[RMDB]
RNA sequence: GGGAACGACUCGAGUAGAGUCGAAAAUUUCAGGGAUCAUUUCUAUAGUUCGUUACUAGAGAAGUUUCUCUGAUCGUGUAGAGCACCGAAAACCACGAGGAGGAGGCGCAGUGUUCUCUCCUGAGCGUAACUAUUUACUCUUCGGAGUAAAUAGUUAAAAAGAAACAACAACAACAAC
Reactivity to DMS in 0.01 (KOAc 150mM, MgCl2 10mM, bicine 150mM(pH8.5), 24C), signal-to-noise 9, nucleotides 027 to 126: u010u020u000c010a000g000g000g000a020u010c150a030u010u000u000c000u000a070u000a010g000u000u020c300g000u020u040a070c000u000a010g000a020g010a020a020g010u000u010u000c000u000c010u000g000a020u010c130g010u010g010u010a070g000a080g010c050a120c020c030g000a070a070a120a120c090c010a100c060g000a070g000g010a090g000g010a070g010g010c110g000c100a070g010u010g000u000u010c020u010c030u000c020c010u010g000a100g020c170g010
Reactivity to 2A3 in 0.01 (KOAc 150mM, MgCl2 10mM, bicine 150mM(pH8.5), 24C), signal-to-noise 9, nucleotides 027 to 126: u070u050u010c000a000g010g000g010a020u040c030a050u070u020u010c010u010a050u010a030g010u040u130c110g090u150u190a010c000u000a000g010a000g000a030a010g010u010u060u000c010u000c000u000g010a020u040c040g000u010g040u120a060g010a030g070c030a030c040c020g040a060a040a030a050c030c010a040c040g040a050g070g040a040g020g040a040g010g030c040g000c090a070g020u020g060u180u030c020u010c000u010c010c020u050g030a040g050c070g040